[RMDB]
RNA sequence: GGGAACGACUCGAGUAGAGUCGAAAAGAUAUGGAGUUCAGACGUGGUAAGUCGAAGAACACACGUAACAUCUGUUCGGAAACGAACAGUGGUGUGGGAGACUCCACCACGUCUGAACUCCUAAGUCCUUAGGAGGAAGGUUCGCCUUCCUCCUAAGAAAAGAAACAACAACAACAAC
Reactivity to DMS in 0.01 (KOAc 150mM, MgCl2 10mM, bicine 150mM(pH8.5), 24C), signal-to-noise 3, nucleotides 027 to 126: g010a080u000a300u000g000g010a030g000u000u000c000a000g000a000c000g040u020g010g020u010a180a010g000u000c000g000a150a160g000a150a250c030a010c000a000c010g010u000a040a100c210a020u010c010u010g010u000u000c010g010g000a100a120a230c010g030a010a020c000a000g030u000g010g000u000g000u000g010g000g000a130g010a010c000u000c150c180a030c000c000a020c010g010u000c000u000g010a000a010c000u010c000c010u010a010a040g010u010c040